RNA sequence: GGGAACGACUCGAGUAGAGUCGAAAAGCAGCAGGGCGUCGGCAUCGGUGAUCAGCAACACACCGCCCUCAUGGCGAACCGCCUGCACUGCCGAGGCCACGGCUUUGACCCGGUCUCCGGCGGCCAGGUGCAUGCAGCCAUUCGUGGCUGCAUGCACAAAAGAAACAACAACAACAAC
Reactivity to DMS in 0.01 (KOAc 150mM, MgCl2 10mM, bicine 150mM(pH8.5), 24C), signal-to-noise 2, nucleotides 027 to 126: g000c080a210g060c020a080g000g000g010c000g130u000c020g000g120c300a090u020c130g000g000u020g000a160u000c090a150g030c100a090a120c140a100c110a140c150c000g000c070c020c030u000c050a100u000g000g000c060g000a050a030c050c010g020c000c010u000g060c260a050c000u030g000c000c000g000a010g050g000c000c000a110c300g000g000c040u020u050u060g050a130c000c000c050g000g000u000c000u000c020c090g070g000c000g000g010c300c000a060g030
Reactivity to 2A3 in 0.01 (KOAc 150mM, MgCl2 10mM, bicine 150mM(pH8.5), 24C), signal-to-noise 2, nucleotides 027 to 126: g040c070a050g010c040a070g010g040g010c030g120u100c060g000g050c040a080u110c000g020g000u030g050a140u190c110a050g180c020a090a110c010a020c000a000c070c000g010c000c020c010u080c040a120u140g060g040c020g010a050a040c040c020g010c000c010u010g000c090a070c040u030g010c000c000g020a030g030g000c030c020a110c040g000g010c000u130u080u300g120a180c000c000c010g000g000u000c040u000c000c060g000g000c000g000g040c030c010a010g040